[RMDB]
RNA sequence: GGGAACGACUCGAGUAGAGUCGAAAAAGACCUGGAGGUAACAGUCAGAGGCCCCUUCCCUGGGCACACUUAGCACCGGUGCCUGGCCCUUGCUAGGGCAGAUGGUUGUGAGGUCCAGCAGCACCUCUGCUGAACACAGUUUCGACUGUGUUCAGCAAAAAGAAACAACAACAACAAC
Reactivity to DMS in 0.01 (KOAc 150mM, MgCl2 10mM, bicine 150mM(pH8.5), 24C), signal-to-noise 2, nucleotides 027 to 126: a130g010a110c080c010u010g020g000a050g030g030u000a080a060c060a070g010u010c050a120g020a070g040g000c040c000c020c030u000u000c000c010c080u000g060g000g000c010a040c030a040c090u000u000a060g010c050a060c200c300g020g020u000g000c020c020u000g010g020c040c010c060u000u000g060c190u000a100g020g000g000c020a100g020a110u000g010g010u000u010g010u020g020a070g030g000u000c060c040a080g030c140a150g010c110a060c040c050u000c070